RNA sequence: GGGAACGACUCGAGUAGAGUCGAAAAUUAUACCGGUGAUAUCGCCGCUGAAGGAAUCAGCAAAGCCAUGCGCGGAGGCGCAAAGUUCCUGCAUCACGGCAUUAAGCGCCAGCAACGUUAUGUGGCACCUAGUGGAUAGUUUCGACUAUCCACUAGGAAAAGAAACAACAACAACAAC
Reactivity to DMS in 0.01 (KOAc 150mM, MgCl2 10mM, bicine 150mM(pH8.5), 24C), signal-to-noise 6, nucleotides 027 to 126: u050u020a090u030a170c040c010g000g020u000g000a090u010a050u020c120g020c020c040g010c060u010g010a070a070g000g000a070a080u000c030a180g010c040a110a110a120g020c030c040a050u000g010c110g030c040g010g010a160g000g000c030g010c020a040a060a070g000u000u000c000c000u010g020c070a080u020c130a080c070g000g000c050a070u010u010a080a130g000c000g010c010c010a140g010c160a080a070c030g000u000u000a060u010g030u010g000g020c060a280
Reactivity to 2A3 in 0.01 (KOAc 150mM, MgCl2 10mM, bicine 150mM(pH8.5), 24C), signal-to-noise 8, nucleotides 027 to 126: u230u080a070u060a150c020c020g010g000u050g040a220u080a060u220c030g000c030c010g000c010u010g030a070a020g090g070a050a100u060c010a010g010c000a040a040a020g000c010c010a030u070g010c020g000c010g030g060a080g020g020c010g000c000a030a090a020g020u050u030c010c000u030g030c010a050u110c050a040c070g040g000c020a010u060u100a100a020g010c010g000c020c010a020g030c050a060a050c020g010u050u060a090u170g020u010g020g000c010a030